Structure probing data (DMS and 2A3) for a 207-nucleotide construct. The 2A3 profile rests on 2,205 reads. The DMS profile rests on 6,658 reads. DMS (dimethyl sulfate) methylates the pairing face of unpaired adenines and cytosines. Source: RMDB library OK3TST, as collected in RNAgym. The reactions ran in a buffer of 150 mM KOAc, 10 mM MgCl2 and 150 mM bicine (pH 8.5), at 24 C.

RNA sequence: GGGAACGACUCGAGUAGAGUCGAAAAGUGACAGAUACCCUCUCUUGAGCUACAUCGGUUUGUGGGGAGUCAAAAGUCCUUUGGAGCUAGGUUUGACAAAUAAGGUGGGUUAACACUUGUUUCCUAGAAAGCACAUGGAGAGCUAGAGUAUUGGCGAAGACUACUAGACUUUCGAGUCUAGUAGUCUAAAAGAAACAACAACAACAAC
Reactivity to DMS in 0.01 (KOAc 150mM, MgCl2 10mM, bicine 150mM(pH8.5), 24C), signal-to-noise 3, nucleotides 027 to 156: g050u000g030a150c040a120g010a140u010a100c020c010c000u010c010u000c040u010u000g020a140g040c020u000a050c040a060u000c050g010g000u000u010u000g010u000g000g000g010g000a090g030u000c030a030a070a110a170g020u000c010c040u010u000u010g050g010a110g050c050u000a060g030g000u000u000u010g000a090c070a040a060a140u000a080a050g010g020u010g020g030g020u010u000a090a080c040a030c040u010u000g010u010u000u000c010c000u000a140g010a070a060a080g010c020a050c050a080u000g030g010a070g000a080g000c020u000a050g010a110g010u000a100u000u000g010g030c020g020a140
Reactivity to 2A3 in 0.01 (KOAc 150mM, MgCl2 10mM, bicine 150mM(pH8.5), 24C), signal-to-noise 4, nucleotides 027 to 156: g060u040g040a030c040a050g060a100u110a090c000c010c000u000c010u000c000u040u060g060a040g050c040u090a070c020a080u110c070g120g050u050u090u100g070u150g000g000g010g030a040g010u040c020a050a040a070a040g070u050c020c000u040u040u100g050g020a050g020c030u050a010g070g020u060u050u140g040a020c040a040a090a090u140a060a040g020g030u050g020g020g020u070u090a080a010c020a020c040u030u060g030u050u060u020c000c000u000a040g070a040a050a000g020c010a040c020a060u070g020g010a050g000a000g000c010u070a010g010a010g060u080a040u110u070g000g000c040g010a020